This 177-nucleotide RNA was probed chemically with 2A3 and DMS. The reactions ran in a buffer of 150 mM KOAc, 10 mM MgCl2 and 150 mM bicine (pH 8.5), at 24 C. Source: RMDB library OK2TRN, as collected in RNAgym. Values cover nucleotides 27 to 126.

RNA sequence: GGGAACGACUCGAGUAGAGUCGAAAAUAGGACUGGAUCGCAUCUCGUACCUCAUGUCAUGGUGCUACACGACGAGACUGAUCCAUGGAUCGACGAUCUCAUGUCACAUGCGUCAUGACCAUGCGUCCCGUACUUGCACAUUCGUGUGCAAGUACGGAAAAGAAACAACAACAACAAC
Reactivity to 2A3 in 0.01 (KOAc 150mM, MgCl2 10mM, bicine 150mM(pH8.5), 24C), signal-to-noise 4, nucleotides 027 to 126: u170a010g050g020a020c030u030g010g030a060u080c050g020c090a070u010c030u020c060g000u090a210c000c010u050c030a040u060g010u020c010a020u030g040g000u020g020c000u030a020c090a010c230g030a000c020g000a000g000a020c040u060g010a020u000c040c020a010u110g040g010a010u020c060g120a080c150g090a300u000c010u020c030a140u220g010u030c010a040c000a060u100g040c010g020u000c000a010u030g010a010c040c040a030u070g000c030g050u030c000
Reactivity to DMS in 0.01 (KOAc 150mM, MgCl2 10mM, bicine 150mM(pH8.5), 24C), signal-to-noise 3, nucleotides 027 to 126: u010a090g010g000a060c020u000g000g000a040u000c140g020c110a300u010c040u000c090g030u000a170c020c000u010c050a060u010g000u010c020a010u010g000g030u000g010c040u000a210c290a120c220g010a010c030g000a030g000a020c120u000g000a050u000c030c050a080u000g010g020a040u010c030g060a110c120g000a110u000c020u000c000a100u030g010u010c000a130c150a060u000g000c020g060u010c020a050u000g020a010c080c230a000u020g010c160g000u010c060
The 2A3 profile rests on 5,882 reads. For DMS, 2,193 sequencing reads were counted.